[RMDB]
RNA sequence: GGGAACGACUCGAGUAGAGUCGAAAAAGAUCGAUUACGAUCGAUCUAUGAUGCCCCUCACCCACCUCUGAAGAUCCCAGGUGGGCGAGGGAACGGAGCACGGGAUCACGAGCAGUACGCUGCUCGAAAAAGAACUAGACCUUCGGGUCUAGUUCAAGUUGAAUGACGAGUUCGCUCGUCAUUCAACAAAAGAAACAACAACAACAAC
Reactivity to 2A3 in 0.01 (KOAc 150mM, MgCl2 10mM, bicine 150mM(pH8.5), 24C), signal-to-noise 1, nucleotides 027 to 156: a000g000a000u050c000g000a000u000u100a020c140g080a030u000c000g000a000u040c010u020a120u100g110a050u170g110c020c020c000c020u000c000a000c000c000c000a020c000c000u020c030u060g190a130a060g030a070u020c000c000c000a000g020g000u000g010g000g000c000g000a000g010g000g010a020a040c160g080g100a090g060c090a050c170g000g000g000a000u030c020a000c040g000a000g010c000a000g000u080a000c190g010c110u000g000c000u000c000g010a000a000a000a000a000g000a000a000c010u010a000g000a020c030c000u050u080c170g080g010g010u000c000u000a000g000u000u000c000a000a000
Source information:
This 207-nucleotide RNA was probed chemically with 2A3. For 2A3, 777 sequencing reads were counted.